[RMDB]
RNA sequence: GGGAACGACUCGAGUAGAGUCGAAAAGAACAAGAUUAAAUGUAAUGGCACACUGAACUAGUGGCCUUGCUUGUGCCUGACUCCAGGGAGUGCAUGACUUCAGACCCAGGCCACGGGACAGCUGGGAUCAGAAACUGAUGAUCUAGUCAGUGCCUAGCACCCUCUUACUGUUCGCAGUAAGAGGGUGAAAAGAAACAACAACAACAAC
Reactivity to 2A3 in 0.01 (KOAc 150mM, MgCl2 10mM, bicine 150mM(pH8.5), 24C), signal-to-noise 3, nucleotides 027 to 156: g110a040a010c060a020a020g110a090u140u290a120a080a140u180g070u170a100a170u130g000g000c010a010c000a030c100u090g030a150a020c020u030a100g000u010g010g000c010c000u030u040g070c050u050u110g010u070g080c010c020u080g090a150c050u050c050c080a060g110g040g020a030g000u120g030c080a050u050g060a100c010u050u040c120a050g020a240c000c000c000a010g020g000c010c030a020c040g020g000g020a050c010a000g040c020u160g080g010g000a040u050c010a040g140a040a150a110c090u140g030a040u030g010a010u090c010u030a030g060u010c090a030g000u000g030c000c000u000a000g000
Reactivity to DMS in 0.01 (KOAc 150mM, MgCl2 10mM, bicine 150mM(pH8.5), 24C), signal-to-noise 1, nucleotides 027 to 156: g010a050a100c080a090a130g020a130u050u010a080a080a200u020g020u000a120a080u000g000g040c070a060c010a110c080u000g020a040a190c110u000a080g020u000g000g020c010c000u000u000g070c020u000u010g020u000g000c040c010u000g020a120c040u000c020c050a100g020g020g000a050g040u000g040c020a040u010g000a000c020u000u030c050a130g010a060c050c050c020a090g000g020c010c000a080c040g050g000g000a290c030a140g010c020u000g020g030g000a120u000c020a080g000a090a050a150c080u000g000a150u000g000a080u000c080u000a150g030u000c020a030g080u000g010c000c020u000a130g020